[RMDB]
RNA sequence: GGGAACGACUCGAGUAGAGUCGAAAAGUGAUCGUUCGCGAUCACAAAAAGCGUACUACAAGGCCGUGUUAGCCGAUAAGUACAUCCCAAAUAGGAUGUACUUUUGACGGCUACACGGAACUACCUUGUAUCGCAAAAAGCUGUGUUCGCACAGCAAACGUUGUCUGAAGUUCGCUUCAGACAACGUAAAAGAAACAACAACAACAAC
Reactivity to DMS in 0.01 (KOAc 150mM, MgCl2 10mM, bicine 150mM(pH8.5), 24C), signal-to-noise 1, nucleotides 027 to 156: g060u000g000a010u000c020g000u010u000c300g020c000g000a000u000c000a020c010a010a050a030a120a160g020c000g000u020a070c160u000a000c000a010a000g000g020c030c000g020u000g160u000u000a000g030c000c010g050a200u000a010a000g000u000a000c000a070u080c000c000c010a090a180a250u010a080g030g000a030u000g060u000a010c010u010u000u000u010g010a190c000g020g000c020u000a010c030a010c000g030g000a030a010c070u000a300c000c000u000u000g000u000a040u000c000g000c030a070a110a100a150a080g030c000u000g000u000g000u000u000c250g030c000a000c030a000g000c000a020a080
Reactivity to 2A3 in 0.01 (KOAc 150mM, MgCl2 10mM, bicine 150mM(pH8.5), 24C), signal-to-noise 2, nucleotides 027 to 156: g000u020g010a000u010c000g010u030u100c200g040c020g110a000u000c000a000c010a010a140a000a000a000g060c100g030u160a110c030u000a000c010a000a000g010g000c020c000g010u030g080u190u080a000g050c010c000g010a020u040a050a000g010u000a000c000a000u000c010c010c020a190a280a040u240a080g000g000a010u000g000u010a000c000u020u030u050u060g190a100c010g000g030c000u000a000c000a000c000g000g000a010a000c000u090a070c000c000u000u000g000u010a010u210c030g000c020a000a040a040a020a020g000c000u000g010u010g050u060u170c140g110c100a000c010a000g000c000a040a070